Structure probing data (2A3 and DMS) for a 207-nucleotide construct.
[RMDB]
RNA sequence: GGGAACGACUCGAGUAGAGUCGAAAACUCUUGUUAGGUGAAAGUUGACGGUCGCCGUGUCAGUCCAUGCCUUUGAAAACAGUUCUAUGUAGUAGGGAGUCGAGAACCUAUGAGAGUUAGAACUUGCUAUGCCUUGGACUCUUCGGAGUCCAAGGAAUCGGGAAAAUAUCUUCGGAUAUUUUCCCGAAAAAGAAACAACAACAACAAC
Reactivity to 2A3 in 0.01 (KOAc 150mM, MgCl2 10mM, bicine 150mM(pH8.5), 24C), signal-to-noise 1, nucleotides 027 to 156: c010u040c040u020u020g100u140u160a130g100g000u030g060a130a090a090g030u020u040g040a020c030g020g030u060c010g000c130c030g010u010g070u040c020a020g020u020c010c010a050u060g060c000c010u050u170u150g150a100a080a010a010c030a060g000u000u020c020u020a090u080g020u030a040g020u010a010g020g040g040a060g070u100c080g020a000g000a180a040c000c000u010a020u050g050a060g000a010g090u030u050a050g010a040a020c020u040u070g070c040u090a050u170g030c020c000u000u000g000g000a000c010u000c000u000u030c000g070g000a000g010u020c000c000a000a000g000g000a000a010
Reactivity to DMS in 0.01 (KOAc 150mM, MgCl2 10mM, bicine 150mM(pH8.5), 24C), signal-to-noise 2, nucleotides 027 to 156: c040u000c010u000u010g000u000u000a070g060g020u000g000a050a070a120g000u000u000g010a160c040g020g020u000c010g060c020c000g050u000g020u000c030a100g000u000c020c040a080u000g010c030c000u010u000u020g000a180a080a060a030c030a040g000u000u000c000u000a060u010g010u010a300g030u010a040g000g010g010a110g020u010c170g010a230g010a090a100c020c010u000a030u000g000a300g010a150g010u000u000a010g000a020a060c040u000u000g040c020u000a080u010g000c010c000u010u000g000g000a040c010u000c010u010u000c300g030g000a020g030u000c010c000a000a010g020g000a010a000
For DMS the reverse transcriptase was MarathonRT. For 2A3, 553 sequencing reads were counted.